[RMDB]
RNA sequence: GGGAACGACUCGAGUAGAGUCGAAAAUGAAUGAACCUUGAGGACACCAUGCUGAGUGAAAUAAGCCAGUCACAAAAAAGACAAAUACUCUAUGAUUCCUCUUACAUGAGGUACCUAGAGUAGUCAAAUUCACAGAGGCAGAAAGUAGAAUGGUGGACUACCAGGAUAUCUUCGGAUAUCCUGGUAGAAAAGAAACAACAACAACAAC
Reactivity to DMS in 0.01 (KOAc 150mM, MgCl2 10mM, bicine 150mM(pH8.5), 24C), signal-to-noise 3, nucleotides 027 to 156: u010g000a070a080u010g000a090a300c060c020u000u010g010a170g010g010a120c070a060c010c020a100u010g020c020u000g010a300g030u000g000a050a040a110u000a110a150g030c030c040a190g010u000c070a110c080a010a020a150a110a070a180g000a090c030a070a050a120u000a000c010u010c010u000a040u010g000a030u010u000c000c000u000c000u000u000a160c160a110u000g000a030g020g010u010a000c000c020u010a030g010a020g050u000a020g000u030c080a040a120a130u000u020c050a040c010a120g000a280g000g030c010a060g000a100a050a080g010u000a050g000a010a060u000g020g010u010g000g010a290
Reactivity to 2A3 in 0.01 (KOAc 150mM, MgCl2 10mM, bicine 150mM(pH8.5), 24C), signal-to-noise 4, nucleotides 027 to 156: u190g060a070a070u070g030a030a060c000c020u040u150g060a050g030g030a000c000a010c030c000a020u050g040c060u090g010a010g030u030g040a050a060a070u180a120a030g080c060c030a030g030u050c030a020c090a100a170a070a050a000a010g030a010c040a010a100a000u030a000c000u000c020u010a060u060g040a300u120u080c020c000u000c020u110u250a150c110a160u280g000a000g000g000u020a020c000c010u020a010g000a000g000u010a010g000u040c010a050a050a050u030u010c010a010c000a050g050a040g100g000c040a020g170a040a070a020g050u070a040g010a120a020u030g000g020u010g060g000a020